[RMDB]
Overview
An RNA of 177 nucleotides, treated with DMS and read out base by base. For DMS, 2,250 sequencing reads were counted.
RNA sequence: GGGAACGACUCGAGUAGAGUCGAAAACAUUGGCAUUUCGAUGCCAAUGGGUCUGCGUCGCGCGGCCGCCGAGUCGUUCCCGCGGGCGCGUGACGCAGUUUGGGCAGCUCGAGUUCGCUCGAGCUAAUUAAACUGUGUCGUUCGCGACACAGUUUAAAAAAGAAACAACAACAACAAC
Reactivity to DMS in 0.01 (KOAc 150mM, MgCl2 10mM, bicine 150mM(pH8.5), 24C), signal-to-noise 1, nucleotides 027 to 126: c000a010u000u000g010g000c000a010u000u000u010c240g000a020u010g000c010c010a010a010u000g000g000g000u000c010u000g020c010g010u010c000g020c020g030c000g000g000c020c010g020c020c210g010a120g000u000c000g010u000u000c000c000c000g040c000g000g000g000c010g000c000g020u000g010a010c030g000c000a000g010u000u010u010g000g000g040c270a050g000c000u000c000g000a030g020u000u040c240g020c000u010c000g000a010g010c000u000a020a080